[RMDB]
RNA sequence: GGGAACGACUCGAGUAGAGUCGAAAACAGCGCGGCCGCGCACACCUCGAUGUCAGCGACAGUCUCGGUGCCACAACACAGUCGGCGGAUUGCCUGCGGGCCCGCCUCGAUCAUGGCGCGGUGCGCGAUAUGCGAGGAGUUUCGACUCCUCGCAUAUAAAAGAAACAACAACAACAAC
Reactivity to DMS in 0.01 (KOAc 150mM, MgCl2 10mM, bicine 150mM(pH8.5), 24C), signal-to-noise 4, nucleotides 027 to 126: c090a200g000c010g020c040g000g020c010c020g020c000g060c000a150c030a100c240c130u000c030g000a050u000g000u000c050a180g010c150g000a010c030a050g000u030c040u020c110g020g030u000g000c060c070a070c210a100a270c080a040c110a110g010u000c070g000g000c020g000g000a130u080u040g040c010c000u000g020c130g010g000g020c010c000c000g010c020c000u000c030g000a020u040c070a220u020g000g000c010g000c000g010g020u000g000c000g020c010g000
Reactivity to 2A3 in 0.01 (KOAc 150mM, MgCl2 10mM, bicine 150mM(pH8.5), 24C), signal-to-noise 5, nucleotides 027 to 126: c050a050g030c000g000c010g050g040c020c000g010c020g030c010a020c010a010c000c010u020c060g010a010u020g040u070c060a070g120c090g140a040c020a060g180u030c020u030c060g090g000u030g060c040c070a170c040a160a050c070a020c030a030g050u080c050g000g010c010g020g040a150u090u300g010c000c000u030g010c200g040g020g000c010c000c000g000c010c000u020c030g030a060u050c010a100u140g050g000c010g000c000g000g020u090g100c000g000c000g000

This 177-nucleotide RNA was probed chemically with DMS and 2A3.
For 2A3, 4,546 sequencing reads were counted.
For DMS the reverse transcriptase was MarathonRT.
Conditions: 150 mM KOAc, 10 mM MgCl2 and 150 mM bicine (pH 8.5), 24 C.
Source: RMDB library OK1LIB, as collected in RNAgym.